Chemical mapping of a 177-nucleotide RNA with DMS and 2A3.

RNA sequence: GGGAACGACUCGAGUAGAGUCGAAAACCUGUUGACUUCGGUCAACAGGAAAACGUGGAUGCUACGCUACCGAAGUAGCAAAAGUGCAGAAGGAACGCACAAAAACUUAUCCGUUCGCGGAUAAGAACACUCUCUGUUUGUUCGCAAACAGAGAGUGAAAAGAAACAACAACAACAAC
Reactivity to DMS in 0.01 (KOAc 150mM, MgCl2 10mM, bicine 150mM(pH8.5), 24C), signal-to-noise 2, nucleotides 027 to 126: c010c000u010g000u010u010g000a020c000u000u000c220g030g020u000c000a040a000c030a000g000g000a010a020a030a130c120g010u000g070g000a110u000g050c000u010a010c030g030c070u000a270c080c050g000a060a130g010u000a010g000c000a040a020a050a160g010u000g010c020a090g000a060a140g000g000a120a110c210g000c040a020c030a090a050a090a100a150c000u000u000a000u000c000c000g000u000u010c200g000c020g010g020a000u000a000a010g000a060a160
Reactivity to 2A3 in 0.01 (KOAc 150mM, MgCl2 10mM, bicine 150mM(pH8.5), 24C), signal-to-noise 2, nucleotides 027 to 126: c000c000u010g000u000u000g000a000c010u020u040c250g100g000u000c000a000a000c010a000g030g000a030a080a000a000c090g070u130g060g050a090u110g010c010u010a000c020g000c040u080a070c000c060g110a210a010g010u010a010g000c020a000a030a000a050g000u010g000c010a020g050a270a040g170g100a150a060c070g000c030a010c000a000a030a020a020a030c000u000u000a000u000c000c000g030u020u060c250g020c020g050g010a000u000a000a000g000a020a000

For DMS the reverse transcriptase was MarathonRT. The RNA was probed in 150 mM KOAc, 10 mM MgCl2 and 150 mM bicine (pH 8.5) at 24 C.